Background: Chemical mapping of a 177-nucleotide RNA with DMS and 2A3. The RNA was probed in 150 mM KOAc, 10 mM MgCl2 and 150 mM bicine (pH 8.5) at 24 C. DMS adducts were read by reverse transcription with MarathonRT.

[RMDB]
RNA sequence: GGGAACGACUCGAGUAGAGUCGAAAAGAUAUGGAGUUGCAAGGGAGCAUUUGAGUUCGAAGAACGAGCUCGGAAACGAGCUCGGGAGAACAAGAUGAGAUGCGAAGAACUUGCAACUCCUAAGUCAGAUAUUCUCCUUGUUCGCAAGGAGAAUAUCAAAAGAAACAACAACAACAAC
Reactivity to DMS in 0.01 (KOAc 150mM, MgCl2 10mM, bicine 150mM(pH8.5), 24C), signal-to-noise 3, nucleotides 027 to 126: g000a030u010a190u000g000g000a020g020u000u000g000c020a010a040g000g000g010a050g010c010a020u000u010u000g000a300g020u010u000c010g010a130a220g000a180a300c000g000a020g010c000u000c010g010g000a050a040a080c000g010a020g010c000u000c000g000g000g000a100g020a010a020c020a060a230g000a230u010g010a140g000a020u010g020c010g000a090a160g010a070a160c000u010u010g010c000a010a010c010u000c000c000u000a000a060g010u010c020a150
Reactivity to 2A3 in 0.01 (KOAc 150mM, MgCl2 10mM, bicine 150mM(pH8.5), 24C), signal-to-noise 2, nucleotides 027 to 126: g000a020u030a020u140g000g010a010g000u010u000g010c000a000a000g000g010g000a040g000c000a020u020u030u100g090a070g020u020u000c110g230a300a050g020a080a000c000g000a010g040c000u000c010g000g020a010a030a000c010g000a000g000c040u000c000g000g000g000a020g010a000a000c020a020a010g170a160u300g210a060g000a060u020g000c060g220a300a020g000a000a040c020u000u030g000c000a010a020c000u000c000c000u000a000a000g000u000c040a000